[RMDB]
RNA sequence: GGGAACGACUCGAGUAGAGUCGAAAAUUAAAGGAGGAGGAGGAGUGUGUGUCUUCCCAGCUGCUGAGUAGAACCUCCGCACACACCCGAAAGCUACGAGCAGCAGCAGUGCGGAAACGGUGAAAAAGCAAUGGUUAACGUUCGCGUUAACCAUUGCAAAAGAAACAACAACAACAAC
Reactivity to DMS in 0.01 (KOAc 150mM, MgCl2 10mM, bicine 150mM(pH8.5), 24C), signal-to-noise 1, nucleotides 027 to 126: u000u020a090a080a100g010g010a090g000g000a050g000g010a130g010g000a070g010u000g030u000g010u010g000u000c140u000u010c030c020c100a190g010c030u010g010c010u010g010a090g050u000a060g000a100a160c040c040u000c030c020g030c070a020c110a020c020a070c030c010c030g000a010a100a130g020c040u000a010c050g010a040g000c020a030g000c010a020g000c040a130g010u000g030c110g010g010a040a030a060c080g010g000u010g000a060a040a070a050a110

An RNA of 177 nucleotides, treated with DMS and read out base by base.
Reactivities are rounded to 0.1 and cut off at 0 and 3.
It was measured as part of the RMDB library M2PK90.
The reactions ran in a buffer of 150 mM KOAc, 10 mM MgCl2 and 150 mM bicine (pH 8.5), at 24 C.